[RMDB]
RNA sequence: GGGAACGACUCGAGUAGAGUCGAAAAGACACCAAGAGUUGGCUGAUGGCAACAUGAAAGGACACGUGCAAGACCUGAAAAGGUCACUUGUAGGGCACGCAGACGCAAGCAAAAAGCACGUUCAAGAUAGCACAGUGAUUUUCGAAUCACUGUGCUAAAAAGAAACAACAACAACAAC
Reactivity to DMS in 0.01 (KOAc 150mM, MgCl2 10mM, bicine 150mM(pH8.5), 24C), signal-to-noise 3, nucleotides 027 to 126: g000a150c090a140c000c040a130a070g000a150g000u000u000g000g000c020u010g010a070u010g000g000c120a060a050c160a060u000g020a080a110a060g020g010a090c150a060c000g040u000g000c000a030a040g000a020c000c010u000g000a050a020a130a000g000g020u000c000a030c010u000u000g010u000a180g010g020g000c050a030c140g020c100a070g030a070c080g000c020a000a030g000c080a070a040a070a070a070g010c000a010c020g000u000u000c060a050a080g000a150
Reactivity to 2A3 in 0.01 (KOAc 150mM, MgCl2 10mM, bicine 150mM(pH8.5), 24C), signal-to-noise 1, nucleotides 027 to 126: g030a010c000a110c100c030a020a010g050a060g150u080u130g010g010c010u060g000a150u060g210g000c000a000a000c030a100u100g130a000a180a110g170g030a020c100a000c030g000u000g000c010a010a010g100a000c000c080u070g010a080a000a000a000g040g000u030c000a060c000u000u030g040u060a100g100g000g040c070a110c200g000c000a000g020a060c000g000c000a020a000g000c000a070a270a000a000a000g040c060a030c000g000u000u030c080a000a000g010a070